The record gives the reactivity of an RNA of 177 nucleotides to DMS and 2A3. For DMS the reverse transcriptase was MarathonRT.
[RMDB]
RNA sequence: GGGAACGACUCGAGUAGAGUCGAAAACUAAAUAAGGAAGAGUCAAAUGCCCUUACUAAAUUCUUCACGAGUUUAGGGACAUACAAUACAGAGAAGGCGAAAAUUUGACCUUCACAAGAACUGUAAAUAUGCCACUUUUAUUCGUAAAAGUGGCAUAAAAAGAAACAACAACAACAAC
Reactivity to DMS in 0.01 (KOAc 150mM, MgCl2 10mM, bicine 150mM(pH8.5), 24C), signal-to-noise 3, nucleotides 027 to 126: c010u020a020a070a120u020a100a120g020g010a010a000g000a140g000u000c030a010a020a000u000g000c090c030c000u030u030a220c020u010a000a010a000u000u010c000u020u070c300a090c270g060a050g020u000u010u000a000g010g000g000a080c200a100u020a080c120a030a160u040a100c070a070g000a100g010a030a040g000g000c070g030a110a120a180a060u040u000u000g010a010c000c000u000u000c020a090c180a050a080g010a190a110c110u020g010u000a080a060a150
Reactivity to 2A3 in 0.01 (KOAc 150mM, MgCl2 10mM, bicine 150mM(pH8.5), 24C), signal-to-noise 2, nucleotides 027 to 126: c020u100a030a020a270u260a040a080g040g000a000a000g000a000g030u090c020a000a000a000u090g230c030c000c010u020u000a020c010u010a000a000a100u000u000c010u200u300c100a090c090g000a000g010u000u000u000a000g010g040g020a060c020a010u150a020c080a010a300u140a050c060a020g130a000g020a150a000g020g000c150g110a000a100a000a170u020u030u020g000a000c010c000u030u060c080a080c090a230a000g140a050a100c080u040g040u130a000a060a100
The 2A3 profile rests on 1,629 reads.
For DMS, 2,719 sequencing reads were counted.
The reactions ran in a buffer of 150 mM KOAc, 10 mM MgCl2 and 150 mM bicine (pH 8.5), at 24 C.
Values cover nucleotides 27 to 126.